Chemical mapping of a 177-nucleotide RNA with 2A3 and DMS. For 2A3, 9,605 sequencing reads were counted. 2A3 adducts were read by reverse transcription with SuperScript II with manganese. The RNA was probed in 150 mM KOAc, 10 mM MgCl2 and 150 mM bicine (pH 8.5) at 24 C. For DMS the reverse transcriptase was MarathonRT.
RNA sequence: GGGAACGACUCGAGUAGAGUCGAAAAUUCUAAGCGUGGAGGUAACGCUGGCAGUUCGAUCAACUUAUUAUUACUGACAUUAAGUUCUUCCAGUGAAGGGGGUAAAUCGCAUAAGGAUCUUAUUUCACGCUAGAAUAAAAUUCGUUUUAUUCUAGCGAAAAGAAACAACAACAACAAC
Reactivity to 2A3 in 0.01 (KOAc 150mM, MgCl2 10mM, bicine 150mM(pH8.5), 24C), signal-to-noise 6, nucleotides 027 to 126: u050u000c010u050a060a000g020c020g030u030g040g060a070g020g050u070a080a010c010g000c020u000g010g000c010a010g020u080u080c040g040a140u050c050a030a050c030u080u070a040u140u040a100u090u160a250c060u060g090a020c020a060u110u080a100a020g000u020u020c010u020u000c010c010a020g010u030g110a090a070g050g010g000g000g000u020a020a090a040u080c040g000c040a020u020a100a030g050g010a030u000c020u080u130a150u040u090u050c040a030
Reactivity to DMS in 0.01 (KOAc 150mM, MgCl2 10mM, bicine 150mM(pH8.5), 24C), signal-to-noise 9, nucleotides 027 to 126: u000u000c030u000a090a100g010c050g030u000g000g010a100g010g000u000a080a090c070g010c040u000g000g000c090a040g010u000u000c100g010a080u000c080a060a070c090u010u000a030u000u010a100u010u010a130c140u000g000a090c120a060u010u000a040a080g010u000u000c030u000u000c030c040a060g010u000g010a080a090g010g010g000g010g020u000a030a050a080u010c070g010c080a070u010a090a100g010g000a050u000c060u000u000a090u010u000u010c080a130